[RMDB]
Chemical mapping of a 177-nucleotide RNA with DMS. DMS adducts were read by reverse transcription with MarathonRT. The RNA was probed in 150 mM KOAc, 10 mM MgCl2 and 150 mM bicine (pH 8.5) at 24 C.

RNA sequence: GGGAACGACUCGAGUAGAGUCGAAAAAUCUUGGCAUCCUUCUGGAGCUUGAUGCCUUCAUCCUUGUUGUACUGCGCAUCGUCCCACAGCAGGCGGUGGAACGAGGAUUCGCCCGAAAGCUCGGCCACACGGAGGUUUUAUUCGUAAAACCUCCGUGAAAAGAAACAACAACAACAAC
Reactivity to DMS in 0.01 (KOAc 150mM, MgCl2 10mM, bicine 150mM(pH8.5), 24C), signal-to-noise 1, nucleotides 027 to 126: a050u000c090u000u000g000g020c040a020u000c010c100u000u020c120u000g040g010a060g010c040u000u010g010a110u000g000c050c010u000u000c180a040u000c020c020u000u010g000u000u000g000u000a060c060u000g000c050g020c110a140u020c120g000u000c000c020c020a050c180a100g020c010a140g030g030c010g000g020u000g000g000a000a000c000g000a020g000g010a070u000u000c150g020c030c000c060g000a050a020a090g000c000u010c060g050g040c130c160a180